[RMDB]
RNA sequence: GGGAACGACUCGAGUAGAGUCGAAAAAGAAUGUUAUUCUAGAACUCCUCGAACCUUUUCGUGUUGCAUUAACUGCUUACGAAGGUGCAGUUUAUGUUUAUCAAGGAAAAACGUUUAUCAUUAGGCUCCUAAAUAUUAACAAGAGAAUUAUUACUGAAGUCAGGAUACUAUUCGUAGUAUCCUGACUAAAAGAAACAACAACAACAAC
Reactivity to 2A3 in 0.01 (KOAc 150mM, MgCl2 10mM, bicine 150mM(pH8.5), 24C), signal-to-noise 1, nucleotides 027 to 156: a020g050a040a000u080g010u080u020a040u130u000c020u040a020g040a100a050c050u010c020c040u010c060g070a080a090c070c060u130u180u070u050c000g030u010g030u110u040g000c000a030u040u060a020a030c020u020g020c000u120u120a060c090g080a050a090g110g000u060g000c000a000g000u000u050u000a000u000g010u040u130u000a120u090c020a020a050g010g000a090a010a000a000a000c000g000u000u000u170a070u020c120a000u000u090a060g080g000c000u020c020c000u080a080a100a040u130a080u100u080a060a000c030a030a030g050a000g020a150a050u170u050a070u060u070a300c030u060g070a020
Reactivity to DMS in 0.01 (KOAc 150mM, MgCl2 10mM, bicine 150mM(pH8.5), 24C), signal-to-noise 1, nucleotides 027 to 156: a060g000a110a070u010g000u000u000a090u000u000c040u000a150g020a060a160c050u000c050c000u020c080g000a000a050c050c070u000u000u000u000c020g000u000g000u000u000g050c010a030u000u000a020a040c030u000g020c020u010u000a300c160g030a160a100g040g050u020g020c020a030g030u000u000u050a040u010g050u000u000u000a050u000c020a080a060g020g000a000a040a040a100a090c110g010u020u000u000a130u010c050a120u000u010a070g020g000c050u010c020c030u000a050a040a050u020a080u000u010a030a090c100a060a160g000a110g030a060a110u010u010a040u000u000a190c090u020g000a270
About this RNA
This 207-nucleotide RNA was probed chemically with 2A3 and DMS. As a SHAPE reagent, 2A3 marks flexible, mostly unpaired nucleotides at the ribose 2'-OH. For DMS the reverse transcriptase was MarathonRT. The reactions ran in a buffer of 150 mM KOAc, 10 mM MgCl2 and 150 mM bicine (pH 8.5), at 24 C. Values cover nucleotides 27 to 156. 2A3 adducts were read by reverse transcription with SuperScript II with manganese.